[RMDB]
Overview: An RNA of 177 nucleotides, treated with 2A3 and DMS and read out base by base. 2A3 adducts were read by reverse transcription with SuperScript II with manganese. The RNA was probed in 150 mM KOAc, 10 mM MgCl2 and 150 mM bicine (pH 8.5) at 24 C. For DMS the reverse transcriptase was MarathonRT. Values cover nucleotides 27 to 126.

RNA sequence: GGGAACGACUCGAGUAGAGUCGAAAACGGAGGAGAAGAAACUUACAAGGAUUCCCCUAGUAACGGCGAGCGAACCGGGACCAGCCCAGCUUGAGAAUCGGGUGGCUUCGUCACCUGAAUUGUAGUCAGGUAGUCAGAAUUUCGAUUCUGACUACCUAAAAGAAACAACAACAACAAC
Reactivity to 2A3 in 0.01 (KOAc 150mM, MgCl2 10mM, bicine 150mM(pH8.5), 24C), signal-to-noise 4, nucleotides 027 to 126: c060g020g020a050g030g050a080g030a070a060g040a040a110a010c020u060u080a080c080a050a110g070g000a120u040u050c000c000c000c010u040a030g000u060a070a040c040g050g000c120g010a040g030c020g040a040a000c000c000g000g000g050a050c010c010a000g030c020c030c010a020g010c010u100u070g090a040g070a130a110u030c010g020g000g000u010g010g000c010u120u130c140g030u010c000a010c010c000u000g060a030a010u050u120g090u020a040g030u080c040
Reactivity to DMS in 0.01 (KOAc 150mM, MgCl2 10mM, bicine 150mM(pH8.5), 24C), signal-to-noise 4, nucleotides 027 to 126: c100g000g000a100g000g020a060g000a100a040g010a050a100a090c080u010u020a100c090a060a090g000g020a190u010u000c040c020c030c070u020a070g000u020a070a050c060g000g010c050g030a080g010c030g040a060a060c060c080g000g010g000a030c060c040a050g000c010c020c020a100g000c060u000u000g000a120g000a070a110u010c020g000g040g000u000g010g000c020u030u050c120g000u010c020a010c010c000u010g000a010a050u020u000g020u000a100g000u020c140